This 177-nucleotide RNA was probed chemically with 2A3 and DMS. The DMS profile rests on 2,952 reads. Values are in units of 0.01, from 0 to 300, in steps of 10. For 2A3 the reverse transcriptase was SuperScript II with manganese. It was measured as part of the RMDB library M2PK90.

[RMDB]
RNA sequence: GGGAACGACUCGAGUAGAGUCGAAAAUCAUUGGCUUCGGUGCGCGCUGCGUUGCCUAGGCUUCAGAUGCUUCGUACUGUUGCCAACGUUGCAAUUUCCAAACGCUAAUGCGAAAGUGUGCAAACAACGUGAAAUGAGUUUUCGAACUCAUUUCACGAAAAGAAACAACAACAACAAC
Reactivity to 2A3 in 0.01 (KOAc 150mM, MgCl2 10mM, bicine 150mM(pH8.5), 24C), signal-to-noise 2, nucleotides 027 to 126: u100c010a010u000u020g010g000c000u020u000c010g010g000u000g010c020g000c030g000c020u050g010c010g060u030u020g010c000c040u110a240g010g040c000u020u010c020a090g040a200u090g000c020u100u190c010g000u010a000c010u010g020u010u000g000c000c000a040a010c010g070u070u070g000c020a050a050u000u080u010c020c000a030a060a000c020g000c040u160a220a010u220g020c030g060a070a020a040g100u100g010u020g060c020a050a080a070c040a090a040
Reactivity to DMS in 0.01 (KOAc 150mM, MgCl2 10mM, bicine 150mM(pH8.5), 24C), signal-to-noise 5, nucleotides 027 to 126: u010c040a070u010u020g010g000c010u000u000c040g010g040u010g000c010g040c300g000c030u000g010c300g000u000u000g030c010c000u000a070g000g020c010u000u000c030a080g000a100u010g000c030u010u010c030g020u000a020c020u000g020u000u000g020c010c010a030a020c060g000u000u000g000c070a070a140u000u020u000c020c020a110a160a080c060g010c020u010a080a140u010g010c070g000a070a100a050g050u000g000u000g010c040a050a030a100c190a070a110